[RMDB]
RNA sequence: GGGAACGACUCGAGUAGAGUCGAAAACGUAAAGGGCGAGCUUUUGUCCGGAAUGGUUCCGCCGUGAUCGCGCCAUGCAAUAGUUGCCAACGACAACUAUGCUCCGGUUGCUCAGGCAGCGUAACGCACAAUGGAACAACCUUCGGGUUGUUCCAAAGGUAGACAGGCGAUUCGUCGCCUGUCUACCAAAAGAAACAACAACAACAAC
Reactivity to 2A3 in 0.01 (KOAc 150mM, MgCl2 10mM, bicine 150mM(pH8.5), 24C), signal-to-noise 1, nucleotides 027 to 156: c000g050u060a000a000a120g020g000g000c020g000a050g070c060u250u110u090u170g060u010c050c000g000g010a030a030u100g000g070u120u020c050c040g000c000c000g130u100g050a030u060c040g000c030g000c010c000a060u070g000c000a080a230u010a070g000u000u010g030c030c010a090a030c070g020a110c010a020a000c000u000a000u100g000c000u000c040c040g130g000u240u300g030c010u050c000a010g100g000c020a010g010c000g020u130a050a000c070g060c070a080c000a080a210u150g000g000a000a000c000a000a000c000c010u090u110c270g080g000g000u000u000g000u000u020c010c000a000a010a000